Overview: The record gives the reactivity of an RNA of 177 nucleotides to DMS. Values cover nucleotides 27 to 126. Source: RMDB libraries RFM100 and RFMREP, as collected in RNAgym. For DMS the reverse transcriptase was MarathonRT. Conditions: 150 mM KOAc, 10 mM MgCl2 and 150 mM bicine (pH 8.5), 24 C.
RNA sequence: GGGAACGACUCGAGUAGAGUCGAAAAACUACGCGUACGCGCGUAGAGAGGCCUGCACAUCCUCGUCGAAAGGUUCCACUGCAGGCUGCGUCUAGGAGCCCUGGGAGACCGGGGCUCCUGCUUUUAAUAUCAUCGAGUAUUUCGAUACUCGAUGAUAAAAAGAAACAACAACAACAAC
Reactivity to DMS in 0.01 (KOAc 150mM, MgCl2 10mM, bicine 150mM(pH8.5), 24C), signal-to-noise 5, nucleotides 027 to 126: a110c000u000a000c010g020c000g020u010a090c210g020c030g020c020g010u000a010g000a150g010a190g000g020c010c000u010g020c010a020c140a130u010c000c010u000c050g020u040c220g020a080a140a060g000g000u010u000c070c070a100c250u010g000c020a010g010g000c000u000g010c170g010u010c090u020a020g000g000a010g010c000c000c000u000g010g010g000a250g000a180c000c000g000g000g020g000c000u000c000c000u000g000c030u020u010u000u020a100a170